RNA sequence: GGGAACGACUCGAGUAGAGUCGAAAAGUCCCGGAGUUCGCUCCGGGACAAAGAACCACAAAUUGACGCAAACUUCCGCGUCAUCGCGAGGAAACGAGGAAAAAAUCACGGAGUUCGCUCCGUGAAACGAUUGUUAUUAGUUCGCUAAUAACAAUCGAAAAGAAACAACAACAACAAC
Reactivity to 2A3 in 0.01 (KOAc 150mM, MgCl2 10mM, bicine 150mM(pH8.5), 24C), signal-to-noise 7, nucleotides 027 to 126: g000u000c010c000c000g000g000a010g010u090u170c160g010c110u000c000c000g010g000g000a000c000a000a000a000g000a030a040c010c010a020c050a050a150a060u100u070g010a000c010g010c020a060a160a250c170u230u050c110c090g000c010g010u010c010a020u040c020g040c040g040a060g040g090a080a100a060c070g030a130g100g000a090a090a020a020a010a060u030c000a000c000g000g000a010g010u050u050c140g040c060u010c000c000g000u010g000a000a000a000
Reactivity to DMS in 0.01 (KOAc 150mM, MgCl2 10mM, bicine 150mM(pH8.5), 24C), signal-to-noise 6, nucleotides 027 to 126: g010u000c000c000c000g010g010a010g020u000u000c210g020c010u010c000c000g010g000g020a000c000a010a030a060g010a170a220c020c010a110c190a050a110a090u010u000g010a020c010g020c010a080a100a120c240u010u010c170c150g010c000g000u000c010a030u000c080g010c090g000a130g000g010a070a070a080c070g010a100g000g020a000a020a050a080a120a110u000c010a010c000g010g010a010g010u000u010c210g010c000u000c000c000g020u000g000a010a020a070
Description
The record gives the reactivity of an RNA of 177 nucleotides to 2A3 and DMS. DMS adducts were read by reverse transcription with MarathonRT. It was measured as part of the RMDB library M2PK50.